[RMDB]
RNA sequence: GGGAACGACUCGAGUAGAGUCGAAAAGUUCACUCUCACACGAUCGUACGAUCGAUCGUUCGUGUUCACGAUCGUACACUCGAGAACGUGUUCGUACGAUCGAGUGUUCGUUCUCGUGUGAACUCUCUCUCUCGAGAGAGAGUGAGAUCUCGAUCGAAUACUCCCACGUAUUCGUACGUGGGAGUAUAAAAGAAACAACAACAACAAC
Reactivity to DMS in 0.01 (KOAc 150mM, MgCl2 10mM, bicine 150mM(pH8.5), 24C), signal-to-noise 1, nucleotides 027 to 156: g000u000u000c010a080c030u010c000u030c060a140c060a130c020g010a040u000c020g010u000a060c040g000a020u010c090g020a130u000c020g030u010u010c060g040u010g010u000u020c020a130c040g020a090u000c030g010u000a030c030a070c050u000c060g010a110g000a030a040c020g050u000g000u000u000c040g010u000a040c000g000a030u020c000g000a010g000u000g040u030u000c070g020u000u000c040u010c040g050u000g000u000g000a050a090c010u000c010u000c000u000c000u000c030u000c160g000a150g010a160g000a020g020a010g010u000g010a040g020a100u000c040u000c000g010a100u010c020g000a260
Reactivity to 2A3 in 0.01 (KOAc 150mM, MgCl2 10mM, bicine 150mM(pH8.5), 24C), signal-to-noise 3, nucleotides 027 to 156: g050u100u050c000a030c020u030c000u010c020a030c000a000c050g000a000u010c000g010u030a050c020g010a060u050c030g060a160u090c040g010u040u020c060g030u030g050u140u090c060a050c090g040a100u080c020g020u050a020c000a000c000u060c030g120a050g040a110a040c010g050u060g040u090u040c040g010u040a010c010g000a080u020c010g010a020g000u020g010u040u030c030g000u020u010c010u000c030g030u040g020u020g050a030a020c010u000c000u000c000u000c000u010c030u050c090g060a060g000a010g010a000g000a000g020u020g020a020g010a070u040c040u020c090g070a100u020c010g030a030